[RMDB]
RNA sequence: GGGAACGACUCGAGUAGAGUCGAAAAGUGCUCGACGACCGCGUCAGCUACAUCUGCGUAGGACGCGACCCGCGCGAUGCCGCGGUGUCAAUGCUGUACCAAUCGGCCAACAUGAACGAAGACCGGAUAAUUUAUGGGCUUUCGAGCCCAUAAAUUAAAAAGAAACAACAACAACAAC
Reactivity to 2A3 in 0.01 (KOAc 150mM, MgCl2 10mM, bicine 150mM(pH8.5), 24C), signal-to-noise 1, nucleotides 027 to 126: g040u030g000c010u050c050g060a070c040g040a060c020c070g020c030g040u010c020a030g050c020u040a030c000a070u070c120u190g080c120g090u010a050g000g010a000c000g000c010g080a020c000c040c000g060c020g020c040g230a200u250g070c160c000g000c000g000g020u110g010u020c000a000a000u120g000c020u010g000u030a080c020c000a040a070u050c000g060g030c030c000a030a020c030a200u150g080a060a010c060g030a070a030g050a050c070c000g020g020a000
Reactivity to DMS in 0.01 (KOAc 150mM, MgCl2 10mM, bicine 150mM(pH8.5), 24C), signal-to-noise 3, nucleotides 027 to 126: g010u000g020c020u000c090g000a110c030g000a050c100c100g000c030g010u000c040a130g000c070u000a040c030a090u000c110u000g000c110g030u000a090g010g030a070c030g020c050g020a130c140c010c000g000c040g010c020g010a090u000g010c110c020g030c010g010g000u000g000u000c030a060a080u010g000c060u000g000u000a130c050c040a070a090u000c050g020g000c050c030a070a170c070a100u000g000a110a100c100g010a060a150g010a080c010c020g000g000a180